[RMDB]
RNA sequence: GGGAACGACUCGAGUAGAGUCGAAAAAAGUAUUGCUAUAGUUAAGGUUGCGCUUGCCUAUUUAGGCAUACUUCUCAGGAUGGCGAGUUGCAGUCCAACAAGAUCCAGGGACUGUACAGAAUUUUCCAAAACGCGUCGAGGUUCGCCUCGACGCGAAGAGGAUAAUUCAGUUCGCUGAAUUAUCCUCAAAAGAAACAACAACAACAAC
Reactivity to DMS in 0.01 (KOAc 150mM, MgCl2 10mM, bicine 150mM(pH8.5), 24C), signal-to-noise 1, nucleotides 027 to 156: a090a030g000u010a090u000u040g000c010u000a080u010a050g000u010u000a180a120g000g000u000u010g060c080g080c050u000u010g010c020c020u000a180u000u010u000a110g030g030c010a010u000a010c020u000u000c050u000c050a140g000g050a080u000g000g010c020g020a080g020u010u010g000c000a030g000u000c030c000a100a170c030a040a130g010a140u010c060c050a160g000g000g030a030c000u010g040u010a200c120a160g000a100a140u010u000u020u000c030c030a010a040a140a110c010g000c010g000u000c000g000a050g000g060u000u000c300g000c030c000u000c000g010a010c000g000c000g010a030a050
Overview:
Source: RMDB library M2RFPK, as collected in RNAgym. An RNA of 207 nucleotides, treated with DMS and read out base by base. DMS adducts were read by reverse transcription with MarathonRT. Conditions: 150 mM KOAc, 10 mM MgCl2 and 150 mM bicine (pH 8.5), 24 C.